The data come from the RNA Mapping Database (RMDB), library PDB130. The record gives the reactivity of an RNA of 207 nucleotides to 2A3 and DMS. The 2A3 profile rests on 1,161 reads.
RNA sequence: GGGAACGACUCGAGUAGAGUCGAAAAUCGGUGAAAUAGACAUGUCUGUGAAGAUGCGGACUACCUGCACCUGGACAGAAAGACCCUAUGAAGCUUUACUGUUCCCUGGGAUUGGCUUUGGGCUUUUCCUGCGCAGCUUAGGUGGAAGGCGAAGAAGCUGUGUCGUAUACUUCGGUAUACGACACAGAAAAGAAACAACAACAACAAC
Reactivity to 2A3 in 0.01 (KOAc 150mM, MgCl2 10mM, bicine 150mM(pH8.5), 24C), signal-to-noise 2, nucleotides 027 to 156: u150c020g000g000u030g020a090a070a060u130a040g070a030c100a080u090g020u010c010u000g060u040g110a120a060g040a080u090g010c030g020g000a060c050u080a070c010c010u050g020c000a020c010c010u030g020g010a000c010a010g070a010a020a000g080a070c030c010c000u040a090u210g080a070a050g000c030u070u070u130a120c030u090g030u060u030c020c000c020u060g020g000g010a050u060u090g060g020c070u050u030u170g100g030g000c000u070u040u030u050c000c020u060g020c050g020c040a050g010c010u110u140a030g000g010u010g000g010a060a010g020g000c040g010a050a000g060a060a010g050
Reactivity to DMS in 0.01 (KOAc 150mM, MgCl2 10mM, bicine 150mM(pH8.5), 24C), signal-to-noise 1, nucleotides 027 to 156: u000c010g010g010u020g010a080a100a150u010a060g000a100c040a230u000g030u010c010u000g000u010g020a080a100g020a080u000g040c000g020g000a190c100u010a120c060c030u010g030c010a030c030c010u000g000g000a070c010a050g010a080a060a070g000a080c020c000c030u000a110u010g010a070a100g010c050u010u000u010a090c100u000g020u020u020c010c010c020u000g000g050g000a100u000u010g030g000c010u010u000u000g030g040g010c010u000u000u010u000c010c020u000g050c090g030c040a070g000c080u030u000a070g050g030u000g000g010a060a060g000g010c030g000a020a100g010a050a110g000
Conditions: 150 mM KOAc, 10 mM MgCl2 and 150 mM bicine (pH 8.5), 24 C. 2A3 adducts were read by reverse transcription with SuperScript II with manganese. The DMS profile rests on 1,785 reads.